About this RNA
Structure probing data (DMS and 2A3) for a 177-nucleotide construct.
RNA sequence: GGGAACGACUCGAGUAGAGUCGAAAAAGAACAAUUUGCUGAGGGCUAUUGAGGCGCAACAGCAUCUGUUGCAACUCACAGUCUGGGGCAUCAAGCAGCUCCAGGCAAGAGUCCUGGCUGUGGAAAGCGUUGCUUUAGAGUUCGCUCUAAAGCAACGAAAAGAAACAACAACAACAAC
Reactivity to DMS in 0.01 (KOAc 150mM, MgCl2 10mM, bicine 150mM(pH8.5), 24C), signal-to-noise 1, nucleotides 027 to 126: a100g010a220a040c100a040a170u020u000u000g000c000u000g000a110g060g020g000c000u000a130u010u000g000a030g080g020c300g010c000a000a060c000a030g000c250a130u000c050u000g020u000u000g000c010a010a300c000u000c000a060c240a130g000u020c020u000g000g000g000g000c000a080u000c200a100a050g000c170a100g000c010u000c000c000a000g000g020c020a110a120g000a020g060u000c000c000u000g000g020c010u010g000u000g000g000a030a170a070g000
Reactivity to 2A3 in 0.01 (KOAc 150mM, MgCl2 10mM, bicine 150mM(pH8.5), 24C), signal-to-noise 2, nucleotides 027 to 126: a010g050a070a010c060a080a040u170u170u190g000c050u250g140a070g040g000g030c050u010a070u040u150g010a000g000g020c000g090c020a000a000c000a000g100c150a150u110c060u050g000u000u000g000c000a030a020c010u010c010a020c000a050g000u000c010u000g020g000g040g000c000a050u110c070a050a060g180c070a010g000c020u000c000c000a000g000g000c050a050a080g100a000g060u000c000c000u010g000g020c040u010g020u030g030g080a080a060a020g100
2A3 adducts were read by reverse transcription with SuperScript II with manganese. For DMS, 751 sequencing reads were counted.